[RMDB]
RNA sequence: GGGAACGACUCGAGUAGAGUCGAAAACGGUGAGACGGUCGUUCGUCAGGGUGUCAAAACGGCGGAUACGGGUGAACAGCGGCCCGUCUUUUUCUCCCCGAACGUCAUCGAUCCACAUCCUGAGCCGGGUGGUCCAAACGUUCGCGUUUGGACCACCAAAAGAAACAACAACAACAAC
Reactivity to 2A3 in 0.01 (KOAc 150mM, MgCl2 10mM, bicine 150mM(pH8.5), 24C), signal-to-noise 1, nucleotides 027 to 126: c070g010g000u030g030a110g000a050c000g020g080u040c040g000u050u020c070g070u080c130a130g000g020g020u000g000u050c020a020a050a000a200c100g000g080c000g020g000a080u220a260c000g000g000g180u160g030a300a040c050a180g010c030g000g000c000c000c000g000u000c000u000u040u000u000u000c000u000c000c000c020c010g040a060a000c010g000u030c040a030u090c060g000a040u000c000c000a000c010a050u060c000c030u040g000a040g080c100c080g030